[RMDB]
An RNA of 177 nucleotides, treated with DMS and 2A3 and read out base by base. For DMS, 1,464 sequencing reads were counted. Conditions: 150 mM KOAc, 10 mM MgCl2 and 150 mM bicine (pH 8.5), 24 C. The data come from the RNA Mapping Database (RMDB), library RFM100.
RNA sequence: GGGAACGACUCGAGUAGAGUCGAAAAGGUUCGAUCCGCGCGGUCAGAAUGUCUCAAUUCGAGUAAUCAAUUGUGCAGUUCUAGCAGCGAGCGGCAGUACCACUGGAGGGAAGCAAUUCAGCACAGUUACUAGUUUUGCGUUCGCGCAAAACUAGUAAAAAGAAACAACAACAACAAC
Reactivity to DMS in 0.01 (KOAc 150mM, MgCl2 10mM, bicine 150mM(pH8.5), 24C), signal-to-noise 2, nucleotides 027 to 126: g000g000u000u000c120g000a130u010c060c010g000c040g030c040g000g020u000c090a040g040a040a060u060g000u070c000u000c000a020a040u030u000c090g000a000g000u040a170a110u040c010a040a040u000u000g020u000g000c050a040g050u000u000c020u000a100g010c040a070g000c080g000a100g000c010g000g030c300a160g000u020a190c050c090a080c000u020g010g000a270g000g000g050a070a060g000c110a050a020u050u040c030a080g050c090a060c140a060g000u010
Reactivity to 2A3 in 0.01 (KOAc 150mM, MgCl2 10mM, bicine 150mM(pH8.5), 24C), signal-to-noise 2, nucleotides 027 to 126: g010g000u000u030c050g040a080u070c040c000g000c030g000c070g060g050u050c010a000g070a050a050u030g180u090c050u000c000a030a020u040u050c120g020a000g060u230a060a230u040c000a000a020u040u000g010u010g000c040a090g130u040u030c010u110a130g030c050a000g030c050g030a020g000c010g010g000c010a010g050u030a060c030c020a030c080u020g020g000a020g070g010g000a020a020g010c040a030a060u010u080c000a020g000c040a000c010a030g000u050